This 170-nucleotide RNA was probed chemically with 2A3 and DMS. The data come from the RNA Mapping Database (RMDB), library 15KLIB. The RNA was probed in 150 mM KOAc, 10 mM MgCl2 and 150 mM bicine (pH 8.5) at 24 C. For DMS, 20,199 sequencing reads were counted.

RNA sequence: GGGAACGACUCGAGUAGAGUCGAAAAAGGGAGAGACCGAAGCGAGGAGGAAAGCAAAGAAAGCAACGGGGCUAGCCGGUGGGUGUUCCGCCCCCCGAGAGGGGAAGAGUGAGGCUUAUCCCGGGGAGAAGAAGCUGGUUCGCCAGCUUCAAAAGAAACAACAACAACAAC
Reactivity to 2A3 in 0.01 (KOAc 150mM, MgCl2 10mM, bicine 150mM(pH8.5), 24C), signal-to-noise 5, nucleotides 027 to 129: a000g020g000g010a030g000a010g010a040c010c020g010a010a020g020c010g000a020g000g020a000g000g000a030a010a000g060c040a050a050a030g080a060a060a020g040c030a000a090c050g030g000g030g000c020u020a020g050c020c020g000g010u080g070g010g010u090g100u130u030c040c030g030c000c000c000c000c000c010g020a030g030a050g080g010g010g030a000a000g020a000g040u170g020a030g040g000c000u060u040a040u100c000c000c000g000g000g020g010a070g010a070a010
Reactivity to DMS in 0.01 (KOAc 150mM, MgCl2 10mM, bicine 150mM(pH8.5), 24C), signal-to-noise 5, nucleotides 027 to 129: a000g000g000g000a030g030a070g040a080c040c040g000a120a050g040c180g000a050g020g030a050g000g000a030a040a060g050c140a060a060a090g040a060a060a110g030c060a110a070c220g000g000g000g000c000u020a090g030c050c000g040g050u040g000g010g000u030g020u050u030c050c060g030c000c000c000c000c000c000g010a000g000a090g050g040g010g020a030a050g020a070g000u050g020a060g000g000c140u040u040a040u020c060c030c010g080g020g030g000a070g020a100a050